Source: RMDB library OK3TST, as collected in RNAgym. This 207-nucleotide RNA was probed chemically with 2A3 and DMS. The RNA was probed in 150 mM KOAc, 10 mM MgCl2 and 150 mM bicine (pH 8.5) at 24 C.

RNA sequence: GGGAACGACUCGAGUAGAGUCGAAAAAGGAUGGACACACAAGUAGACAAGUGUGUAGGCAGAGACAGGCAGGAGAGGUGGAGGUGGUCAAGCCCCAUCACUCAGCUCCAGCCAGAACUGCAGCAGACAGGCAGACACCAGGGCGUUUUCCACCUCCCACAAGGAAUCAGUUCGCUGAUUCCUUGUGAAAAGAAACAACAACAACAAC
Reactivity to 2A3 in 0.01 (KOAc 150mM, MgCl2 10mM, bicine 150mM(pH8.5), 24C), signal-to-noise 2, nucleotides 027 to 156: a000g100g000a050u090g040g030a020c020a000c000a000c020a110a090g130u120a050g150a070c080a170a100g020u040g000u000g020u130a040g080g010c010a020g010a010g010a190c040a050g010g030c000a000g020g010a030g000a020g000g040u050g000g040a140g000g030u030g010g040u060c060a050a050g010c000c020c040c030a070u080c050a030c060u130c010a070g020c020u000c050c000a000g000c030c000a000g030a050a010c020u030g000c010a010g040c010a010g030a160c050a070g000g080c030a020g030a100c020a020c040c020a000g050g000g030c120g050u040u040u030u050c030c000a030c020c030u050c000c000
Reactivity to DMS in 0.01 (KOAc 150mM, MgCl2 10mM, bicine 150mM(pH8.5), 24C), signal-to-noise 1, nucleotides 027 to 156: a100g030g000a080u010g010g040a100c040a060c020a040c010a060a160g000u000a100g010a100c120a070a210g030u000g020u000g010u010a040g040g000c040a120g020a110g000a090c080a100g040g000c180a090g000g040a030g010a140g000g040u000g050g000a020g040g060u000g030g000u010c100a070a160g020c040c010c000c010a070u000c040a010c040u000c010a020g000c030u000c000c010a160g050c070c050a100g020a070a080c070u000g010c090a090g000c010a100g000a100c110a130g000g070c020a080g000a080c050a060c040c000a020g030g000g000c040g000u000u000u000u000c000c010a050c010c000u010c010c000